[RMDB]
RNA sequence: GGGAACGACUCGAGUAGAGUCGAAAACAGCCGGGAGCCAAACCGGAUCAGUCCGUAUGUGUCACCGAUCGUCAGCUUGUCGCCGAUGUGCGCGUAGCACACGAUUCGGCGGGCCAGCAGGCCUGCAGGUGGUAGGACUAUUCGUAGUCCUACCACCAAAAGAAACAACAACAACAAC
Reactivity to DMS in 0.01 (KOAc 150mM, MgCl2 10mM, bicine 150mM(pH8.5), 24C), signal-to-noise 3, nucleotides 027 to 126: c110a200g000c000c000g030g000g000a130g010c080c120a050a130a110c070c020g010g000a040u000c050a070g010u010c000c050g000u010a060u000g010u030g020u000c010a140c020c030g000a100u010c120g010u000c120a170g000c000u000u000g000u000c000g020c020c020g020a090u010g040u020g030c020g010c140g020u000a090g000c000a080c120a030c080g000a110u000u010c030g000g020c070g000g000g010c030c030a090g000c120a130g010g000c030c000u000g030c220a070
Reactivity to 2A3 in 0.01 (KOAc 150mM, MgCl2 10mM, bicine 150mM(pH8.5), 24C), signal-to-noise 2, nucleotides 027 to 126: c030a000g100c000c010g030g020g030a020g050c040c010a080a040a030c040c000g030g020a020u060c010a000g030u020c000c050g100u140a060u180g170u040g030u020c030a010c050c040g010a060u030c000g050u000c020a020g000c000u040u070g060u150c030g000c030c000g180a240u090g040u120g020c020g000c050g120u110a020g110c020a010c000a000c090g070a080u150u090c020g000g000c090g000g010g040c000c000a030g070c030a020g000g040c000c010u010g030c010a050